[RMDB]
RNA sequence: GGGAACGACUCGAGUAGAGUCGAAAAAAAAACAAUAGCGAUAACAAUAACCGUAACAAUAACGCUAACAAUAACAAGCGCAAUAACGGUAACAAUGGCCGUAACAAGCGCAAUCCGCCAAAAAAAACAGAGUAGGAAGAUUCGUCUUCCUACUCUGAAAAGAAACAACAACAACAAC
Reactivity to 2A3 in 0.01 (KOAc 150mM, MgCl2 10mM, bicine 150mM(pH8.5), 24C), signal-to-noise 1, nucleotides 027 to 126: a010a000a000a000a000c060a010a030u040a010g050c010g090a100u050a180a080c120a130a010u100a060a040c130c010g100u060a000a080c080a020a070u090a080a020c020g000c000u030a010a010c080a090a040u100a150a000c060a220a000g010c040g000c000a030a010u080a060a000c010g000g050u060a070a010c120a020a220u210g220g000c000c010g050u030a010a000c060a000a120g050c000g040c040a000a060u040c000c000g010c000c040a140a010a000a060a000a000a000a000
Reactivity to DMS in 0.01 (KOAc 150mM, MgCl2 10mM, bicine 150mM(pH8.5), 24C), signal-to-noise 1, nucleotides 027 to 126: a000a030a020a020a010c120a070a090u000a020g050c000g000a050u000a110a050c160a050a070u020a090a050c240c160g070u000a070a050c040a150a150u040a050a040c000g020c000u000a090a100c300a170a050u030a000a090c160a070a110g030c000g000c020a140a100u000a050a020c000g010g000u000a040a150c300a030a020u020g000g000c020c000g030u000a020a100c270a130a130g030c010g000c040a100a040u000c070c020g020c040c090a000a000a000a000a030a000a130a080

Structure probing data (2A3 and DMS) for a 177-nucleotide construct. DMS adducts were read by reverse transcription with MarathonRT. The reactions ran in a buffer of 150 mM KOAc, 10 mM MgCl2 and 150 mM bicine (pH 8.5), at 24 C. For 2A3, 984 sequencing reads were counted.